[RMDB]
RNA sequence: GGGAACGACUCGAGUAGAGUCGAAAACAGAUUUACAAAAUUAUUAUGCUCCAAUAAGACCUGAAUAUCUAAGAGCAUUUAACAACUCAGGUGAAAUUUCUCUGUUAUGUGAGGACUCCAGGAUGAAAAUGUGGAGAAACAACAGAGGUAAAGUUAAGUCAUACCGUAAUUUCGAUUACGGUAUGACAAAAGAAACAACAACAACAAC
Reactivity to 2A3 in 0.01 (KOAc 150mM, MgCl2 10mM, bicine 150mM(pH8.5), 24C), signal-to-noise 2, nucleotides 027 to 156: c000a030g120a070u140u300u300a090c090a030a150a130a040u160u190a120u120u100a010u050g010c000u030c030c000a070a090u110a250a000g080a030c010c010u050g030a100a040u100a100u270c100u240a120a000g010a000g010c000a000u150u110u040a140a020c070a060a060c050u050c130a030g000g100u180g100a120a000a060u020u080u000c000u000c010u000g000u080u090a200u140g060u030g090a010g020g070a010c000u000c000c000a050g070g000a180u110g160a210a230a050a000u180g040u030g020g000a000g000a000a040a010c010a000a000c000a000g030a040g000g000u050a000a090a000g010u000u220a070a030

This 207-nucleotide RNA was probed chemically with 2A3.
Source: RMDB library OK3TST, as collected in RNAgym.